[RMDB]
Source: RMDB library OK2TST, as collected in RNAgym. This 177-nucleotide RNA was probed chemically with 2A3 and DMS. Reactivities are given for positions 27 through 126. For 2A3 the reverse transcriptase was SuperScript II with manganese. The reactions ran in a buffer of 150 mM KOAc, 10 mM MgCl2 and 150 mM bicine (pH 8.5), at 24 C. High 2A3 reactivity points to a flexible backbone, as in loops and unpaired stretches.
RNA sequence: GGGAACGACUCGAGUAGAGUCGAAAAUCACUGGGGAUGACAGUAGGGACUGUUCGACAGGGCGCGGAAGAGAUUUAUCGUGGCACCAGCGAAAUUUCCGCUGGCAAUGCGGACCUUUCAUCUCGCACCCCUGAUAUUUAUUCGUAAAUAUCAGGGGAAAAGAAACAACAACAACAAC
Reactivity to 2A3 in 0.01 (KOAc 150mM, MgCl2 10mM, bicine 150mM(pH8.5), 24C), signal-to-noise 9, nucleotides 027 to 126: u080c030a030c110u040g010g020g000g020a040u060g030a030c020a050g090u090a070g060g030g040a030c030u050g040u090u070c030g050a040c030a050g040g040g000c030g010c020g050g010a080a030g050a030g020a050u060u150u130a140u150c040g010u040g050g000c030a020c040c010a010g010c010g060a040a050a090u120u110u030c050c000g000c010u010g030g040c040a030a030u090g010c010g000g020a020c000c000u030u080u060c040a050u020c020u010c030g010c020a090
Reactivity to DMS in 0.01 (KOAc 150mM, MgCl2 10mM, bicine 150mM(pH8.5), 24C), signal-to-noise 9, nucleotides 027 to 126: u000c050a070c070u010g010g000g000g010a120u000g010a060c090a040g010u000a100g020g010g010a110c070u000g010u000u010c060g020a110c090a080g010g010g010c070g010c090g010g010a050a080g010a090g010a080u000u010u000a070u010c030g010u000g000g010c180a100c030c010a030g020c020g000a030a070a140u000u000u000c090c010g020c010u010g010g000c120a040a130u000g010c030g010g000a060c080c050u000u010u000c070a110u000c030u000c030g010c160a250